[RMDB]
RNA sequence: GGGAACGACUCGAGUAGAGUCGAAAAGAAAAGAAGAAAAGAAAGAAAGAAGAAGAAAAAGCGUUGAGCAGCGAAAGAAACGCUGCACGCCGCAGCGCACGGCGUGCAAUAAAAAGAAAAGAAGAAAGGUGCAUAUACGAUUCGUCGUAUAUGCACCAAAAGAAACAACAACAACAAC
Reactivity to DMS in 0.01 (KOAc 150mM, MgCl2 10mM, bicine 150mM(pH8.5), 24C), signal-to-noise 1, nucleotides 027 to 126: g010a070a040a020a090g030a060a090g010a080a140a040a060g010a060a000a010g000a100a040a100g000a080a010g000a040a200g000a020a040a030a050a110g030c000g020u040u010g000a100g100c120a090g000c060g000a030a000a080g020a180a060a020c090g010c090u000g000c010a000c000g020c000c030g000c150a020g000c130g000c090a100c000g000g000c000g020u000g000c030a060a040u030a020a100a120a090a080g000a000a090a040a000g000a100a030g040a050a080a110
Reactivity to 2A3 in 0.01 (KOAc 150mM, MgCl2 10mM, bicine 150mM(pH8.5), 24C), signal-to-noise 1, nucleotides 027 to 126: g020a000a030a000a000g010a020a000g040a000a100a000a000g050a000a020a000g070a050a000a000g040a030a000g020a050a000g020a070a100a000a000a000g000c010g020u090u100g070a020g010c060a000g020c050g010a080a070a020g070a020a110a020c050g000c010u000g000c030a000c010g000c000c010g070c050a120g050c030g070c020a050c000g000g000c000g000u020g020c000a000a000u100a100a020a000a010a000g170a020a030a000a000g090a080a000g060a050a060a020